This 177-nucleotide RNA was probed chemically with DMS and 2A3. The RNA was probed in 150 mM KOAc, 10 mM MgCl2 and 150 mM bicine (pH 8.5) at 24 C. Values are in units of 0.01, from 0 to 300, in steps of 10.
RNA sequence: GGGAACGACUCGAGUAGAGUCGAAAAUGACGCAUCCUGGCGCGCAAGUUUUGGUGAUUGCUGCAGACAUUGCGCGCUACGGCGUUGGCACUCCUGGCGAGGUGACGCAAGGCGCUGGUGCUGUGGCAAAUCAGCGAGGUUUCGACCUCGCUGAUUUAAAAGAAACAACAACAACAAC
Reactivity to DMS in 0.01 (KOAc 150mM, MgCl2 10mM, bicine 150mM(pH8.5), 24C), signal-to-noise 2, nucleotides 027 to 126: u000g010a090c030g000c040a110u020c040c100u010g020g000c020g030c020g000c020a060a050g040u000u000u000u000g000g030u000g000a150u010u010g020c060u000g000c100a020g000a040c020a120u000u000g010c060g010c000g020c000u000a000c170g000g010c040g010u000u000g010g000c080a100c070u000c020c030u010g010g000c070g000a070g030g000u000g010a070c060g000c060a120a100g010g010c120g010c020u000g000g010u020g010c040u000g010u000g010g020c050
Reactivity to 2A3 in 0.01 (KOAc 150mM, MgCl2 10mM, bicine 150mM(pH8.5), 24C), signal-to-noise 1, nucleotides 027 to 126: u140g030a020c000g020c090a020u030c050c080u040g000g000c030g000c020g020c020a010a080g000u020u110u180u150g130g030u120g100a300u150u300g040c070u110g040c010a050g070a090c060a130u040u020g010c080g060c000g000c020u010a010c030g030g000c000g000u000u020g070g000c030a070c140u030c020c000u060g070g000c040g020a010g000g070u060g020a050c070g020c020a000a080g120g000c040g000c050u030g000g050u080g030c070u050g010u090g010g050c000